[RMDB]
RNA sequence: GGGAACGACUCGAGUAGAGUCGAAAACUGAAAGUACCAACGCUAGUGCCAAGGAGGACGCCAAUAAAGAUGGCAAUGCUGAGGAUAAUAGAUUCCAUCCAGUCACCGACAUUAACAAAGAGUCGUACCUAUUAUCCGGUUUCGACCGGAUAAUAGGAAAAGAAACAACAACAACAAC
Reactivity to DMS in 0.01 (KOAc 150mM, MgCl2 10mM, bicine 150mM(pH8.5), 24C), signal-to-noise 4, nucleotides 027 to 126: c050u010g020a110a090a090g000u000a110c060c090a040a120c180g010c050u000a050g010u000g010c010c060a050a170g000g000a090g030g020a140c170g010c030c020a030a090u010a080a080a120g010a110u010g030g000c050a070a060u020g000c010u000g000a250g000g010a050u020a060a100u000a060g010a080u010u000c040c030a050u010c030c030a080g010u000c070a100c180c040g010a050c010a060u010u000a080a040c050a040a080a160g000a000g010u000c000g000u000a080
Reactivity to 2A3 in 0.01 (KOAc 150mM, MgCl2 10mM, bicine 150mM(pH8.5), 24C), signal-to-noise 4, nucleotides 027 to 126: c020u020g050a010a030a090g060u080a090c000c030a030a020c060g030c030u060a030g100u030g150c010c020a060a050g050g020a040g050g050a070c070g010c020c000a050a040u160a220a140a030g170a110u070g000g000c020a020a030u080g000c010u020g020a040g010g020a030u050a100a060u070a120g070a060u120u030c020c010a020u020c030c010a030g040u040c020a030c100c020g020a020c020a060u100u120a140a030c030a070a100a010g020a000g010u000c010g000u010a030